RNA sequence: GGGAACGACUCGAGUAGAGUCGAAAAGCAUCUAUUUGGAAAGUCGCAGACAGUUCAGCAGGAUUCAAAGGUUUAGUAAAACACUCAUUGGUAAUUUUAGGUUUCGCAGGUGCGUAUAUGGUCGCUGACGCUUACAACUUUGCGAAUGUAAUUACUACACUCCCAAUUCAUUCGUGAAUUGGGAGUGAAAAGAAACAACAACAACAAC
Reactivity to DMS in 0.01 (KOAc 150mM, MgCl2 10mM, bicine 150mM(pH8.5), 24C), signal-to-noise 1, nucleotides 027 to 156: g030c040a050u010c030u000a080u020u000u000g020g010a060a070a140g000u000c000g020c030a200g010a080c060a070g020u000u000c010a100g010c010a080g010g010a090u000u000c050a050a080a060g030g010u000u030u000a130g000u020a110a060a090a130c030a070c040u000c010a070u000u000g000g010u000a000a050u000u020u000u020a120g000g010u010u000u010c040g020c020a060g010g020u000g010c060g040u000a050u000a050u000g000g000u010c050g050c100u000g030a070c030g010c090u010u000a040c030a050a050c050u030u010u000g080c040g000a100a040u020g000u000a050a060u000u000a020c020u000a120
Reactivity to 2A3 in 0.01 (KOAc 150mM, MgCl2 10mM, bicine 150mM(pH8.5), 24C), signal-to-noise 3, nucleotides 027 to 156: g000c000a040u060c060u200a110u130u060u080g080g010a100a110a020g040u020c020g020c090a000g020a070c020a040g050u070u110c000a000g040c010a020g040g030a060u080u090c060a040a020a060g070g090u090u060u090a060g020u150a080a010a180a040c040a010c070u110c010a090u020u100g000g030u030a050a030u010u070u050u150a140g020g060u040u030u030c010g000c040a070g000g010u060g040c020g040u010a060u030a030u150g100g030u050c050g070c290u080g000a010c020g000c060u010u050a060c040a080a000c000u160u250u070g010c000g000a000a000u050g020u070a010a010u030u040a010c000u040a020
About this RNA:
Chemical mapping of a 207-nucleotide RNA with DMS and 2A3. The 2A3 profile rests on 1,214 reads. Conditions: 150 mM KOAc, 10 mM MgCl2 and 150 mM bicine (pH 8.5), 24 C. Reactivities are given for positions 27 through 156. 2A3 is a SHAPE reagent: it acylates the 2'-hydroxyl of flexible nucleotides of all four kinds.